[RMDB]
RNA sequence: GGGAACGACUCGAGUAGAGUCGAAAAUCACGUUGCAUUUUGUAGACCCUAUGCUUGUAAGAAUAGCAAUACGUGGCUUAGCUCAUGCUGAUCUAACUGUUUUUAGAGCAGUUGAACUUCUCAAUGGGCGAUCCGAUAGGUUCGCCUAUCGGAUCGCAAAAGAAACAACAACAACAAC
Reactivity to 2A3 in 0.01 (KOAc 150mM, MgCl2 10mM, bicine 150mM(pH8.5), 24C), signal-to-noise 3, nucleotides 027 to 126: u050c010a000c010g010u000u060g010c070a100u050u040u010u210g120u120a070g110a200c030c000c030u090a080u140g040c040u030u050g080u080a120a060g050a220a080u080a110g000c000a000a030u090a090c030g030u030g030g000c020u050u050a020g000c010u020c020a050u100g020c030u030g030a040u000c020u020a010a040c030u050g110u180u040u030u060u090a090g040a000g000c000a010g010u020u010g020a020a030c020u050u010c020u000c020a020a190u150g040g070
Reactivity to DMS in 0.01 (KOAc 150mM, MgCl2 10mM, bicine 150mM(pH8.5), 24C), signal-to-noise 3, nucleotides 027 to 126: u010c020a030c020g000u000u000g020c080a060u000u010u010u000g030u000a120g000a160c030c070c070u000a120u010g000c030u000u000g010u000a140a110g010a080a070u010a090g000c010a050a100u010a050c080g050u010g010g010c090u000u000a040g000c030u000c010a030u020g030c020u000g000a050u000c020u010a010a030c300u000g010u000u000u000u010u010a040g010a040g010c010a000g000u000u000g010a010a030c040u000u000c010u000c020a120a090u000g020g010